[RMDB]
Source information: Chemical mapping of a 207-nucleotide RNA with 2A3 and DMS. For DMS the reverse transcriptase was MarathonRT. The DMS profile rests on 2,187 reads.
RNA sequence: GGGAACGACUCGAGUAGAGUCGAAAACUGUGGGAGGCCAAGACGGGUGAAUGGCUUGAGCUGAAGAUCAGCUUGGACGACAGAGCAAAACCCUGCCUCUACUAAAAAUACGAAAACUAGCUGGGUGUGCACAUCUGUAGUCCUGGCUACUUGGGAAUAUUAAUUUAUAGUUCGCUAUAAAUUAAUAAAAAGAAACAACAACAACAAC
Reactivity to 2A3 in 0.01 (KOAc 150mM, MgCl2 10mM, bicine 150mM(pH8.5), 24C), signal-to-noise 1, nucleotides 027 to 156: c030u070g020u100g080g030g000a040g010g050c010c030a040a030g060a020c060g000g040g030u070g040a040a170u110g040g050c000u020u100g020a000g020c020u040g020a040a040g040a160u090c010a020g010c020u040u020g010g010a020c010g000a010c020a000g050a020g010c010a000a080a080a050c000c000c000u020g010c020c020u060c080u030a020c000u080a040a090a040a090a080u200a020c050g010a000a080a140a050c050u040a040g010c010u040g000g000g040u010g030u070g080c010a030c000a200u060c040u020g000u010a020g050u030c000c010u000g010g000c000u030a020c010u070u110g030g000g000a020a050
Reactivity to DMS in 0.01 (KOAc 150mM, MgCl2 10mM, bicine 150mM(pH8.5), 24C), signal-to-noise 1, nucleotides 027 to 156: c060u010g030u030g010g030g030a120g010g010c020c050a060a060g020a080c070g000g000g030u000g010a080a110u010g000g030c030u000u000g010a130g000c020u000g010a150a170g020a110u000c010a000g000c000u010u000g020g010a010c000g000a050c010a040g000a090g010c020a110a070a110a300c010c000c020u000g020c010c010u000c030u000a090c100u000a000a050a060a110a090u000a150c040g000a060a130a070a120c110u010a000g030c000u000g000g020g010u000g030u000g000c060a150c090a090u000c030u000g030u010a070g010u000c000c020u010g020g010c010u000a010c050u030u000g010g010g010a140a220